This 177-nucleotide RNA was probed chemically with DMS. For DMS the reverse transcriptase was MarathonRT.

[RMDB]
RNA sequence: GGGAACGACUCGAGUAGAGUCGAAAAGGACGAUUUCAACACGCUUAACCAGCGCCGGAUCGAGGAAGGUAGAGUUCAGGUGGCCGGUGUCAGUGCCUUGGCGAAUACCAUCAACCAAAGUCAGCACCAAGGGCAGCAUUUUCGAAUGCUGCCCUUGAAAAGAAACAACAACAACAAC
Reactivity to DMS in 0.01 (KOAc 150mM, MgCl2 10mM, bicine 150mM(pH8.5), 24C), signal-to-noise 1, nucleotides 027 to 126: g010g040a090c060g020a090u010u000u000c030a120a010c220a120c020g000c050u010u000a120a120c090c050a180g050c070g010c050c070g010g000a050u000c050g000a160g030g000a040a040g000g040u000a010g020a120g040u000u000c160a080g090g030u000g000g020c040c060g040g020u000g000u000c110a030g000u000g000c000c030u000u010g010g030c080g010a050a070u000a140c110c010a030u000c090a050a090c110c020a030a110a150g030u000c060a120g010c050a090c110
It was measured as part of the RMDB library OK2TST. Conditions: 150 mM KOAc, 10 mM MgCl2 and 150 mM bicine (pH 8.5), 24 C.